[RMDB]
RNA sequence: GGGAACGACUCGAGUAGAGUCGAAAAGCUAUCUAAAGAAGAACGAAUCAUGGAAGGACUUUCGCUUAUUCCAUUGCCAGGUAUGGGCUUCCUCAAAGGUGCUGGGAAAAGUUUAAUGAAAUUAGGCAGCAUCUGACGUAUUCGUACGUCAGAUGCUAAAAGAAACAACAACAACAAC
Reactivity to DMS in 0.01 (KOAc 150mM, MgCl2 10mM, bicine 150mM(pH8.5), 24C), signal-to-noise 1, nucleotides 027 to 126: g010c100u050a030u000c060u010a060a100a050g000a090a030g000a050a070c030g010a090a140u000c060a120u050g000g020a060a050g050g010a090c060u000u000u040c080g000c030u000u020a050u000u000c000c070a010u000u040g050c020c190a040g010g000u040a030u000g000g000g020c070u010u020c110c050u000c030a030a120a030g020g000u000g040c100u000g000g060g000a110a050a030a080g000u030u030u030a110a050u010g000a040a040a300u030u000a080g000g020c080
Reactivity to 2A3 in 0.01 (KOAc 150mM, MgCl2 10mM, bicine 150mM(pH8.5), 24C), signal-to-noise 2, nucleotides 027 to 126: g000c020u080a050u030c090u270a060a090a090g090a100a040g000a080a000c000g060a020a120u130c090a110u060g020g000a090a050g060g030a050c000u050u140u260c140g040c030u070u000a050u260u000c020c010a020u070u150g030c070c020a030g000g010u060a100u040g000g020g000c110u000u020c000c060u100c100a000a050a050g070g050u060g100c050u020g000g040g050a000a090a060a000g030u040u050u170a150a210u190g110a160a050a110u240u040a070g000g070c020
About this RNA
This 177-nucleotide RNA was probed chemically with DMS and 2A3. Conditions: 150 mM KOAc, 10 mM MgCl2 and 150 mM bicine (pH 8.5), 24 C. As a SHAPE reagent, 2A3 marks flexible, mostly unpaired nucleotides at the ribose 2'-OH. The DMS profile rests on 1,288 reads. 2A3 adducts were read by reverse transcription with SuperScript II with manganese.